[RMDB]
RNA sequence: GGGAACGACUCGAGUAGAGUCGAAAAGACAAUCAGGAUGCAGCGUGUAUAAUAUUAUGGUUGUAUAAAUGUUAUCCUCUGUAGAGAAAAAAAGUUGCAUAAAUGGGACAUUGAGAAGAAAGUGUAUUCCUAUGUCAUUAAAACUUUGCUGCCCAGACUGCCAUUUAAAUUUCGAUUUAAAUGGCAGAAAAGAAACAACAACAACAAC
Reactivity to DMS in 0.01 (KOAc 150mM, MgCl2 10mM, bicine 150mM(pH8.5), 24C), signal-to-noise 2, nucleotides 027 to 156: g000a120c070a080a130u020c030a100g060g030a120u000g010c050a040g040c060g020u000g030u020a040u000a070a050u000a070u000u010a160u000g010g030u000u000g010u000a080u000a080a040a060u000g010u000u000a080u000c020c020u000c050u000g020u000a100g040a190g020a010a000a090a120a120a040a180g010u010u000g010c020a080u000a070a070a070u000g000g000g000a040c020a030u000u000g010a120g020a020a050g000a080a070a100g020u000g020u010a180u000u000c000c000u000a040u000g010u020c040a090u010u000a040a100a100a080c090u000u000u000g010c020u010g000c000c010c010a090g000a280
Reactivity to 2A3 in 0.01 (KOAc 150mM, MgCl2 10mM, bicine 150mM(pH8.5), 24C), signal-to-noise 2, nucleotides 027 to 156: g050a040c030a020a110u120c040a040g050g050a030u040g010c000a020g010c020g080u110g010u060a060u020a070a040u040a030u140u050a080u170g080g000u030u050g030u030a070u100a100a090a050u050g010u020u010a020u070c020c000u000c020u020g050u190a030g030a010g040a100a130a010a000a000a010a040g050u080u030g000c020a030u090a100a150a060u080g050g000g000a000c010a030u070u120g020a070g020a140a030g040a070a110a000g050u040g010u080a080u020u070c000c010u040a010u030g020u010c010a020u000u190a000a050a060a080c020u050u060u050g030c040u080g000c040c000c000a030g020a050
Structure probing data (DMS and 2A3) for a 207-nucleotide construct. For DMS the reverse transcriptase was MarathonRT. The DMS profile rests on 3,694 reads. The reactions ran in a buffer of 150 mM KOAc, 10 mM MgCl2 and 150 mM bicine (pH 8.5), at 24 C. 2A3 adducts were read by reverse transcription with SuperScript II with manganese.